Structure probing data (2A3 and DMS) for a 177-nucleotide construct. Values are in units of 0.01, from 0 to 300, in steps of 10. For DMS, 2,808 sequencing reads were counted. For 2A3, 4,849 sequencing reads were counted. For 2A3 the reverse transcriptase was SuperScript II with manganese.

RNA sequence: GGGAACGACUCGAGUAGAGUCGAAAAGAUAUGGAGAUGAACUGACGACGAUCCUUACUUCCCUACCUCAUCUCGGAAACGAGAUGAGGGUAGGGAAGUAAGGGGAGUCACCCCAUCUCCUAAGUCACUUUAGAACCAUGUUCGCAUGGUUCUAAAGAAAAGAAACAACAACAACAAC
Reactivity to 2A3 in 0.01 (KOAc 150mM, MgCl2 10mM, bicine 150mM(pH8.5), 24C), signal-to-noise 1, nucleotides 027 to 126: g040a020u130a060u260g000g010a000g000a010u020g050a130a150c200u120g070a070c060g030a040c020g000a030u010c010c000u000u000a010c000u010u020c000c000c000u000a010c010c000u000c000a010u000c000u000c020g040g010a140a140a060c020g000a000g000a010u000g010a040g000g010g020u020a000g000g020g000a020a010g000u010a000a000g000g030g010g020a010g010u000c000a000c000c010c000c010a010u010c000u000c000c000u000a090a020g090u040c010a030
Reactivity to DMS in 0.01 (KOAc 150mM, MgCl2 10mM, bicine 150mM(pH8.5), 24C), signal-to-noise 3, nucleotides 027 to 126: g000a090u000a300u010g000g000a050g000a000u010g010a130a120c260u010g020a070c060g020a060c190g010a300u000c000c000u000u000a000c010u000u000c000c010c010u010a010c000c000u000c000a000u000c000u010c010g000g000a080a110a270c020g000a040g020a000u000g000a020g020g000g000u000a000g010g010g000a000a010g010u010a000a000g000g000g010g000a300g000u000c010a080c120c130c180c020a040u000c000u000c000c000u000a030a100g000u000c050a190